An RNA of 177 nucleotides, treated with 2A3 and DMS and read out base by base. 2A3 adducts were read by reverse transcription with SuperScript II with manganese. For DMS, 16,853 sequencing reads were counted. For DMS the reverse transcriptase was MarathonRT. Source: RMDB library OK1LIB, as collected in RNAgym.

[RMDB]
RNA sequence: GGGAACGACUCGAGUAGAGUCGAAAAAUUUGUAGAGACUUUCGCAAAUGCGAUAUUCGUCAGUACUUUUGUCAUGGAAGCUUGUUUGUCAUCAAACUUAUGCGAUGUGCGUAAUAUGCGAUCAGCCGAAAGUCAUACAUUUCGAUGUAUGACUUUCAAAAGAAACAACAACAACAAC
Reactivity to 2A3 in 0.01 (KOAc 150mM, MgCl2 10mM, bicine 150mM(pH8.5), 24C), signal-to-noise 9, nucleotides 027 to 126: a000u140u130u140g080u100a060g020a010g020a150c040u050u060u000c010g000c020a080a140a170u230g000c010g030a040u040a090u150u080c040g040u050c050a040g050u080a080c030u060u100u080u140g100u130c060a080u090g060g060a050a030g030c080u110u080g070u090u080u060g100u090c050a100u060c010a090a020a070c040u110u110a030u180g030c020g070a060u070g060u080g050c000g010u010a060a060u090a160u200g030c030g050a070u050c060a010g080c020c050
Reactivity to DMS in 0.01 (KOAc 150mM, MgCl2 10mM, bicine 150mM(pH8.5), 24C), signal-to-noise 6, nucleotides 027 to 126: a060u020u020u020g010u010a070g010a160g000a070c030u010u010u000c010g010c020a120a110a070u050g010c040g010a060u020a040u020u010c090g030u010c050a050g010u020a040c030u020u000u010u010g010u010c110a080u030g010g000a070a090g020c150u000u000g010u000u010u000g010u020c120a120u020c030a010a070a030c100u010u010a040u010g000c030g010a050u020g010u020g000c010g000u000a040a030u020a070u010g010c140g000a060u010c080a060g020c220c140